[RMDB]
RNA sequence: GGGAACGACUCGAGUAGAGUCGAAAAAAAGAUAUGGAGUGUCAAGAAGGUGCAGCUCCGAAGAACUUCGCUCGGAAACGAGCGAAGGGAGGAGCUGAACUACACCGUAAGACACUCCUAAGUCAAACUCCUAGUUAAAGUUCGCUUUAACUAGGAGAAAAGAAACAACAACAACAAC
Reactivity to DMS in 0.01 (KOAc 150mM, MgCl2 10mM, bicine 150mM(pH8.5), 24C), signal-to-noise 5, nucleotides 027 to 126: a090a070a130g010a020u000a060u010g000g010a030g040u000g010u000c000a030a070g010a190a220g000g010u000g000c010a010g000c000u000c000c020g000a060a150g020a140a200c010u000u000c000g000c000u000c010g000g000a020a010a040c000g010a010g000c000g010a000a010g010g000g020a030g030g010a010g020c000u000g000a020a000c100u010a300c020a010c000c000g000u020a150a250g000a010c000a000c010u000c000c000u000a000a070g010u000c010a080a090a130
Reactivity to 2A3 in 0.01 (KOAc 150mM, MgCl2 10mM, bicine 150mM(pH8.5), 24C), signal-to-noise 1, nucleotides 027 to 126: a000a010a000g020a010u020a010u020g000g000a000g010u000g000u000c020a030a010g040a060a020g060g000u020g010c000a000g000c010u000c020c010g180a210a010g000a010a000c000u000u000c000g000c020u010c000g010g010a010a010a010c010g000a010g000c030g010a000a000g000g010g000a020g000g000a020g000c000u000g000a000a000c000u120a040c010a000c010c000g010u020a020a020g000a000c000a000c000u000c000c000u000a000a000g000u000c000a040a030a170

Structure probing data (DMS and 2A3) for a 177-nucleotide construct. Values cover nucleotides 27 to 126. For DMS the reverse transcriptase was MarathonRT. For 2A3 the reverse transcriptase was SuperScript II with manganese. The reactions ran in a buffer of 150 mM KOAc, 10 mM MgCl2 and 150 mM bicine (pH 8.5), at 24 C.